[RMDB]
RNA sequence: GGGAACGACUCGAGUAGAGUCGAAAACGCCUCAGCGACGAUCGGAUGUGGAGCCAGCAGCGAAAGGAAGGAGACGAGCUCCUGUUUCUCCGCUGGACGCCAGGAUCCGCGGCGACCGAGGCAGAGCUCCACCCGACCUCGACUUCCCCCAGGUUUCGAACUUGGUUAAGUUCGCUUAACCAAGUUCAAAAGAAACAACAACAACAAC
Reactivity to 2A3 in 0.01 (KOAc 150mM, MgCl2 10mM, bicine 150mM(pH8.5), 24C), signal-to-noise 3, nucleotides 027 to 156: c080g040c000c000u030c040a030g020c000g030a020c020g050a150u230c020g010g030a060u110g040u020g070g000a030g050c010c010a010g010c010a000g000c030g060a070a040a030g080g110a070a030g010g010a040g030a060c150g080a110g180c010u000c010c000u020g030u020u080u030c030u000c000c010g000c030u020g010g060a090c090g040c020c000a030g050g090a070u000c020c000g050c040g110g020c050g080a150c010c040g000a150g020g010c030a020g020a000g010c010u000c000c010a010c010c000c000g020a040c000c020u030c020g090a170c070u060u060c000c000c000c000c040a030g080g000u000u020u000c010